Source information
Conditions: 150 mM KOAc, 10 mM MgCl2 and 150 mM bicine (pH 8.5), 24 C. Structure probing data (2A3 and DMS) for a 177-nucleotide construct. For DMS the reverse transcriptase was MarathonRT. For DMS, 1,910 sequencing reads were counted. For 2A3 the reverse transcriptase was SuperScript II with manganese. The data come from the RNA Mapping Database (RMDB), library M2PK50.

RNA sequence: GGGAACGACUCGAGUAGAGUCGAAAAUCGACUUCCUUCGGGAAGUCGAAAAUAACGGUCGGCUCAUGAAGCUAGUCGAACAUGCUGCUCGACCUAGACAAAAAAGAAUCUCGUUCGCGAGAUUCAACUUCCCAUAAAACUUCGGUUUUAUGGGAAGAAAAGAAACAACAACAACAAC
Reactivity to 2A3 in 0.01 (KOAc 150mM, MgCl2 10mM, bicine 150mM(pH8.5), 24C), signal-to-noise 3, nucleotides 027 to 126: u010c000g000a000c000u000u020c000c020u000u050c160g070g000g000a010a010g000u020c000g000a000a000a010a000u060a030a020c040g010g000u000c010g010g000c000u000c010a010u010g030a050a050g050c080u100a060g300u300c010g020a050a050c000a000u030g080c040u020g000c070u130c140g000a000c000c000u010a060g060a050c080a010a170a020a010a020a010g000a010a000u020c000u000c000g000u040u060c250g020c010g060a000g000a010u010u000c000a000a000
Reactivity to DMS in 0.01 (KOAc 150mM, MgCl2 10mM, bicine 150mM(pH8.5), 24C), signal-to-noise 3, nucleotides 027 to 126: u000c010g010a020c000u000u000c000c000u000u020c210g020g030g010a010a000g010u000c010g000a000a000a040a090u000a140a120c220g000g020u000c000g000g000c010u020c000a040u000g000a120a300g010c070u000a070g000u020c060g000a170a220c010a000u000g010c140u000g010c020u000c020g000a020c020c000u000a050g000a070c230a000a050a040a070a090a080g000a020a000u000c000u000c000g010u000u010c170g020c000g000a000g000a020u000u000c000a070a100